[RMDB]
RNA sequence: GGGAACGACUCGAGUAGAGUCGAAAAAUAAGUCCUUUCGAGGACUUAUAAUGCUGCCCAAAGAGGACCUGGGGGAGUCUGGGCUGCUAAACUCAUCAGCCGUGGCUUUGGGGUUCGCCCCAAAGAACGGUGAUCUCUUAUUCGUAAGAGAUCACCGAAAAGAAACAACAACAACAAC
Reactivity to DMS in 0.01 (KOAc 150mM, MgCl2 10mM, bicine 150mM(pH8.5), 24C), signal-to-noise 3, nucleotides 027 to 126: a010u000a010a010g000u000c000c000u000u000u010c170g010a040g020g010a010c000u000u000a000u000a040a100u010g010c110u000g010c010c000c020a130a110a120g020a170g000g000a060c030c030u010g000g000g010g000g000a160g020u000c040u010g000g010g010c000u000g000c070u000a060a090a090c080u000c080a080u000c060a050g020c020c030g010u000g000g000c000u000u000u000g010g000g010g030u000u010c170g010c010c000c000c010a010a020a010g010a090a120
Reactivity to 2A3 in 0.01 (KOAc 150mM, MgCl2 10mM, bicine 150mM(pH8.5), 24C), signal-to-noise 2, nucleotides 027 to 126: a000u010a000a000g000u000c000c000u040u020u100c210g110a010g010g000a000c000u030u000a000u010a010a060u080g020c050u070g020c000c000c010a040a180a010g140a040g030g000a000c040c080u070g040g020g020g000g000a010g000u030c040u060g030g040g000c000u000g000c020u050a140a070a110c060u060c070a080u030c020a060g020c040c010g050u060g110g000c040u030u030u020g020g010g000g010u050u070c170g080c000c000c020c030a020a010a000g000a070a000
Source information:
Conditions: 150 mM KOAc, 10 mM MgCl2 and 150 mM bicine (pH 8.5), 24 C. This 177-nucleotide RNA was probed chemically with DMS and 2A3. It was measured as part of the RMDB library M2PK50. DMS adducts were read by reverse transcription with MarathonRT. Reactivities are rounded to 0.1 and cut off at 0 and 3. Reactivities are given for positions 27 through 126. For DMS, 2,748 sequencing reads were counted.